RNA sequence: GGGAACGACUCGAGUAGAGUCGAAAAAAAAAAGAUAUGGAAGACGGGUCGGGAGGCGCAGAUAUUGUUCCUCGGAAACGAGGACAAUGUAGCCUCCGGCGCCUAGCGUCUUCCUAAGUCAAAAAAACUAUUGCACUUACUUCGGUAAGUGCAAUAGAAAAGAAACAACAACAACAAC
Reactivity to DMS in 0.01 (KOAc 150mM, MgCl2 10mM, bicine 150mM(pH8.5), 24C), signal-to-noise 1, nucleotides 027 to 126: a020a090a090a170a070a240g000a040u000a180u020g020g000a000a010g000a010c000g000g000g050u000c020g040g000g010a000g000g000c000g040c300a140g000a000u000a000u000u000g010u020u010c000c000u000c000g020g030a050a080a150c020g000a010g010g030a000c000a000a000u000g030u000a050g010c000c000u000c000c000g000g010c060g000c160c070u010a060g000c060g000u000c010u000u010c000c000u010a000a160g000u010c010a000a000a130a060a110a140a160
Source: RMDB library TTRDES, as collected in RNAgym. The record gives the reactivity of an RNA of 177 nucleotides to DMS. The RNA was probed in 150 mM KOAc, 10 mM MgCl2 and 150 mM bicine (pH 8.5) at 24 C. DMS adducts were read by reverse transcription with MarathonRT.